[RMDB]
The record gives the reactivity of an RNA of 177 nucleotides to DMS and 2A3. The reactions ran in a buffer of 150 mM KOAc, 10 mM MgCl2 and 150 mM bicine (pH 8.5), at 24 C. Source: RMDB library OK1LIB, as collected in RNAgym. The DMS profile rests on 5,762 reads. The 2A3 profile rests on 3,407 reads.
RNA sequence: GGGAACGACUCGAGUAGAGUCGAAAAGUCAUGGCUGUGAUUGUCAUCAUUGGUGUUAUUGUCAGUGUGUUUACCAUUCUGUAUUUUUCACCGCUUGAUGCGGCUUAUAGCAUACUGGGACAAAAUGCAGUCCUCAAGUUUUCGAACUUGAGGACUGAAAAGAAACAACAACAACAAC
Reactivity to DMS in 0.01 (KOAc 150mM, MgCl2 10mM, bicine 150mM(pH8.5), 24C), signal-to-noise 3, nucleotides 027 to 126: g020u000c040a060u010g000g020c030u040g000u010g050a100u050u000g010u020c020a030u010c010a070u010u000g000g020u000g010u000u010a040u000u000g020u000c050a070g010u020g020u000g010u000u020u040a100c210c020a040u020u000c020u000g010u010a030u000u000u030u020u010c110a060c000c010g010c100u010u000g000a020u000g000c040g000g010c110u010u000a050u010a060g010c000a040u010a090c070u000g000g010g010a080c090a060a040a080a080u080g010
Reactivity to 2A3 in 0.01 (KOAc 150mM, MgCl2 10mM, bicine 150mM(pH8.5), 24C), signal-to-noise 6, nucleotides 027 to 126: g040u020c020a070u140g070g000c020u040g030u050g090a110u070u090g090u120c010a010u000c000a000u070u100g000g000u050g030u060u080a110u070u100g070u040c010a000g010u010g000u000g070u100u150u120a120c080c010a010u030u050c020u040g070u090a120u040u070u010u030u060c030a040c020c030g080c110u020u100g040a030u090g020c010g040g000c030u100u100a140u080a020g000c000a030u040a100c040u030g080g090g030a030c060a030a070a020a030u180g000